[RMDB]
RNA sequence: GGGAACGACUCGAGUAGAGUCGAAAAGAUAUGGAGUUGAACUACACCUCCGAAGAGCUUGGACCUCGGAAACGAGCUAGCUUGUAGAGGUGCAACUCCUAAGUCAAAAUCCGAGUUCGCUCGGAAAUCUUCUAUAUGAGUUCGCUCAUAUAGAAGAAAAAGAAACAACAACAACAAC
Reactivity to 2A3 in 0.01 (KOAc 150mM, MgCl2 10mM, bicine 150mM(pH8.5), 24C), signal-to-noise 4, nucleotides 027 to 126: g030a010u050a030u140g000g000a020g020u020u020g020a090a010c040u180a050c150a020c020c000u070c040c020g080a220a060g000a000g020c050u130u150g070g180a300c030c020u000c030g020g030a030a070a020c000g000a010g000c020u020a000g010c010u050u090g110u250a060g000a010g000g000u000g000c010a000a000c000u000c000c000u010a070a000g020u010c010a020a040a020a300u010c010c010g000a000g020u020u140c230g020c130u000c000g000g000a040a030a070
Reactivity to DMS in 0.01 (KOAc 150mM, MgCl2 10mM, bicine 150mM(pH8.5), 24C), signal-to-noise 5, nucleotides 027 to 126: g000a020u000a300u000g000g000a020g010u000u000g010a090a050c080u020a300c010a020c010c000u000c010c060g020a140a130g000a010g000c020u000u010g020g010a130c270c010u000c000g010g000a080a090a170c000g010a010g000c010u000a020g010c010u000u000g010u010a140g000a020g000g020u000g000c010a010a010c010u000c000c000u000a020a050g010u010c020a100a080a110a110u000c000c000g000a020g010u000u020c220g010c000u000c000g000g000a010a060a060